[RMDB]
RNA sequence: GGGAACGACUCGAGUAGAGUCGAAAAACAAAGGUGAGAUUGACGAACUGAACGCCAAGCAAGUUGGAUUGAAGUACUACCAAAAGUUCAACAAAUAUGCUGGCAACAAGGACGUCAAGUUCAACAACGUUUACUUCAACACCGUUAGAGCCAAGGGCAAUCUGAUUCGCUUCGGCGAAUCAGAUUGAAAAGAAACAACAACAACAAC
Reactivity to 2A3 in 0.01 (KOAc 150mM, MgCl2 10mM, bicine 150mM(pH8.5), 24C), signal-to-noise 1, nucleotides 027 to 156: a010c080a000a080a000g040g040u100g000a080g010a130u040u020g010a000c000g000a080a030c030u040g000a060a030c050g000c000c010a010a040g030c000a000a070g030u000u010g000g000a010u000u070g000a080a000g070u100a200c150u160a040c100c100a000a140a060a000g000u000u000c000a000a000c000a010a090a030u140a060u100g040c000u010g010g010c020a000a030c030a050a000g000g010a000c010g000u000c000a000a020g020u120u060c030a020a020c020a050a050c020g000u010u030u100a040c000u020u090c060a060a110c030a040c050c030g060u150u110a030g000a040g020c070c090a080a030g020g010g010
An RNA of 207 nucleotides, treated with 2A3 and read out base by base. Reactivities are rounded to 0.1 and cut off at 0 and 3. For 2A3 the reverse transcriptase was SuperScript II with manganese. It was measured as part of the RMDB library OK3TST.